[RMDB]
The data come from the RNA Mapping Database (RMDB), library OK2TRN. The record gives the reactivity of an RNA of 177 nucleotides to DMS.

RNA sequence: GGGAACGACUCGAGUAGAGUCGAAAAUGGACAGGAGAAAUAGAACUCAGUAGAAUCUUGGGCAAUGUAUGCAAAGAGGUUUUCACAGAAGGACAGAUCCAGCUUGCCCUGUAAACAUGAAAAGUAACUCAACUGGCUAUUUCGAUAGCCAGUUGAGAAAAGAAACAACAACAACAAC
Reactivity to DMS in 0.01 (KOAc 150mM, MgCl2 10mM, bicine 150mM(pH8.5), 24C), signal-to-noise 1, nucleotides 027 to 126: u010g000g000a110c040a040g010g000a110g000a030a050a060u000a060g000a160a080c090u030c030a070g010u000a160g000a120a070u000c070u010u000g000g020g020c050a060a080u000g030u030a080u030g000c030a010a090a100g000a020g010g010u000u000u000u000c110a090c110a030g000a030a040g010g000a090c090a030g000a140u000c010c080a120g000c080u000u000g010c020c030c010u000g000u010a010a050a090c110a110u050g000a010a080a090a090g000u020a060a140